[RMDB]
RNA sequence: GGGAACGACUCGAGUAGAGUCGAAAAUCUCAGCCCCUCCACCUUGGGGUGCCCUAUCCGAGACACUGCUGUUUCGGUAGAAAGGCUAAGCACGUCGCAAUGACGUAAGGUGGGACUUUUCCUUCUGCAGUUCCUAUCAGUUCGCUGAUAGGAACUGAAAAGAAACAACAACAACAAC
Reactivity to 2A3 in 0.01 (KOAc 150mM, MgCl2 10mM, bicine 150mM(pH8.5), 24C), signal-to-noise 2, nucleotides 027 to 126: u020c020u000c000a030g000c020c010c000c000u000c000c000a010c000c000u000u020g000g000g040g030u090g010c020c000c000u020a030u000c000c030g000a000g020a000c020a010c100u300g070c130u130g020u000u000u000c000g010g020u000a000g050a000a030a010g030g000c030u020a050a030g040c090a010c000g000u000c010g000c170a220a290u300g000a000c000g030u030a020a000g080g010u000g000g010g000a000c040u140u140u090u130c010c020u050u070c030u120g060
Reactivity to DMS in 0.01 (KOAc 150mM, MgCl2 10mM, bicine 150mM(pH8.5), 24C), signal-to-noise 1, nucleotides 027 to 126: u000c020u020c020a300g000c010c000c000c010u000c030c000a000c020c000u010u010g000g000g000g000u000g020c000c000c000u000a120u000c000c020g000a040g020a010c010a040c300u010g000c300u000g000u000u000u010c010g020g040u000a020g010a060a090a130g000g000c010u000a110a080g050c180a050c000g000u000c000g000c220a190a050u020g000a020c000g010u000a000a010g020g000u000g000g020g020a100c200u000u000u040u000c150c070u010u000c120u000g010